[RMDB]
RNA sequence: GGGAACGACUCGAGUAGAGUCGAAAAAAGUCGAUCAGCGGCAGGUGCGCCAUGGGGCCAUCGGCGGUCAGGCCGUUGACAUUGAUCGGCAAGCCGGGCCCGAGACCCUCCGGAUUCUCGAGGUGCGCCGAAAGCUGGAUUUCGAUCCAGCUUUCGGAAAAGAAACAACAACAACAAC
Reactivity to DMS in 0.01 (KOAc 150mM, MgCl2 10mM, bicine 150mM(pH8.5), 24C), signal-to-noise 1, nucleotides 027 to 126: a060a080g000u000c020g010a070u000c050a050g030c030g000g000c090a070g000g030u000g000c030g000c000c020a150u000g030g000g030g010c110c010a050u000c100g010g030c010g020g000u000c040a040g020g030c010c030g020u000u020g010a110c200a130u000u020g000a020u000c020g010g000c000a170a120g020c050c020g040g030g010c030c000c020g010a050g000a090c100c010c030u000c130c140g000g020a090u020u000c010u000c000g020a150g020g000u030g050c050g030